[RMDB]
RNA sequence: GGGAACGACUCGAGUAGAGUCGAAAAUAGCACUGGACAGAAGGCCCCAUCUAGAUGAGACAGAGCUGGUGGGGCAGGACAAAGACUCCUGGCAGCUCAAACGGCCUGGCAGAUGCUUGGAGAGAGGUCAAUAGAGACCUUUCGAGGUCUCUAUUGAAAAAGAAACAACAACAACAAC
Reactivity to 2A3 in 0.01 (KOAc 150mM, MgCl2 10mM, bicine 150mM(pH8.5), 24C), signal-to-noise 7, nucleotides 027 to 126: u150a010g000c010a020c030u040g030g090a040c020a070g100a100a050g120g010c010c000c000c010a010u010c070u190a090g060a150u110g040a040g050a120c090a060g100a030g060c010u020g010g110u010g000g000g000g020c010a000g000g000a010c030a010a130a030g030a020c020u010c010c000u020g030g010c020a020g000c010u020c070a050a070a030c040g020g000c010c000u010g020g000c010a010g030a120u040g000c010u030u030g030g000a030g000a010g010a010g020g090
Reactivity to DMS in 0.01 (KOAc 150mM, MgCl2 10mM, bicine 150mM(pH8.5), 24C), signal-to-noise 9, nucleotides 027 to 126: u020a040g010c020a040c020u000g000g010a100c080a100g020a100a050g000g000c010c000c040c020a030u010c040u030a050g020a050u010g000a120g010a170c210a130g000a050g000c000u000g000g010u000g010g000g000g020c040a010g000g010a070c180a110a100a110g010a120c080u000c010c000u010g010g000c010a030g000c010u000c040a050a100a100c160g000g000c010c000u000g000g000c040a010g000a070u000g010c020u010u020g000g000a070g000a080g020a080g000g000